[RMDB]
RNA sequence: GGGAACGACUCGAGUAGAGUCGAAAAACGCUCUACGGAGCGAUCAUACGGAUUGCUGAUCUGUAUGAUCCAUACGGAUUGGCAAUCCAUAUGGUCGUACGGAUUGUUGAUCCGUAUGUGCAUACAAGAAUCAGAGAUUUUUCGAAAUCUCUGAUUCAAAAGAAACAACAACAACAAC
Reactivity to 2A3 in 0.01 (KOAc 150mM, MgCl2 10mM, bicine 150mM(pH8.5), 24C), signal-to-noise 7, nucleotides 027 to 126: a000c020g010c000u000c000u020a050c170g060g000a010g000c000g000a010u010c000a000u000a010c030g000g000a000u000u020g020c020u030g010a000u000c000u000g010u000a000u010g100a230u020c080c000a000u010a000c010g000g000a000u000u000g010g000c000a000a000u000c000c000a000u010a000u010g010g010u020c010g010u010a010c020g050g040a080u050u170g130u080u160g060a050u000c000c000g000u000a030u120g050u020g020c030a040u080a170c050a040a140
Reactivity to DMS in 0.01 (KOAc 150mM, MgCl2 10mM, bicine 150mM(pH8.5), 24C), signal-to-noise 6, nucleotides 027 to 126: a070c070g010c000u000c000u000a100c110g020g000a040g010c000g010a000u000c000a010u000a010c070g010g010a010u000u010g000c030u000g000a010u000c000u000g000u000a000u000g000a120u020c160c030a010u000a000c000g010g000a020u000u000g000g000c010a010a020u000c010c000a010u000a000u000g000g010u000c000g010u000a040c050g000g000a120u000u000g010u010u010g010a140u000c010c000g000u010a000u010g020u010g010c080a110u020a120c220a100a120

Annotation:
An RNA of 177 nucleotides, treated with 2A3 and DMS and read out base by base. The reactions ran in a buffer of 150 mM KOAc, 10 mM MgCl2 and 150 mM bicine (pH 8.5), at 24 C.